Conditions: 150 mM KOAc, 10 mM MgCl2 and 150 mM bicine (pH 8.5), 24 C. This 207-nucleotide RNA was probed chemically with 2A3. It was measured as part of the RMDB library M2RFPK.
RNA sequence: GGGAACGACUCGAGUAGAGUCGAAAACCAGCAGCCAUGACCUACCAGGCUGCGGUGCGGCUCGCCGAACAGGUCAUCCCUCAUCGGGCGCGUCCUGCGUCCUUCCACGCCAACCCACAAGGGAUCUAAAACACGUUGGGCUUCGGCCCAACGUGAAGACAGUUUACUACUUCGGUAGUAAACUGUCAAAAGAAACAACAACAACAAC
Reactivity to 2A3 in 0.01 (KOAc 150mM, MgCl2 10mM, bicine 150mM(pH8.5), 24C), signal-to-noise 2, nucleotides 027 to 156: c020c020a010g010c000a000g000c010c040a250u070g060a170c010c060u090a150c120c020a050g000g000c000u000g020c000g000g000u010g090c000g000g000c000u030c010g010c000c000g040a080a090c130a110g050g050u010c000a070u050c010c030c020u020c020a100u180c050g000g000g000c000g000c010g050u300c000c100u210g010c000g030u020c010c000u010u090c060c040a060c080g040c000c030a060a040c030c010c000a090c050a300a130g030g000g010a000u000c000u290a110a140a010a010c000a000c000g030u010u000g000g000g000c010u030u050c150g150g000c000c000c000a000a000c000g000u000g000a000a000